[RMDB]
RNA sequence: GGGAACGACUCGAGUAGAGUCGAAAAGCUUGCUCUUGCAACUGGUGUAAAUGGUCGUUUAUCUGCUUUAACUGAUGAAGAAAAGGUCAAACUAAUGCCAUUACUUAUGGAGCCAGAUUUCAUGAACCGACUCGCUGGUGUUCGCACCAGCGAGUCGAAAAGAAACAACAACAACAAC
Reactivity to 2A3 in 0.01 (KOAc 150mM, MgCl2 10mM, bicine 150mM(pH8.5), 24C), signal-to-noise 2, nucleotides 027 to 126: g000c000u000u000g100c000u000c000u100u110g000c100a110a130c160u140g090g000u010g050u080a000a130a110u080g040g010u030c060g020u020u020u020a200u000c180u130g270c000u200u060u230a000a140c000u060g020a100u170g000a080a000g060a000a140a000a000g020g000u060c050a000a000a000c000u000a110a190u180g000c000c000a010u000u000a000c030u150u040a300u150g030g030a000g000c000c000a030g000a000u000u080u080c050a040u080g050a020a020c000
Record summary
This 177-nucleotide RNA was probed chemically with 2A3.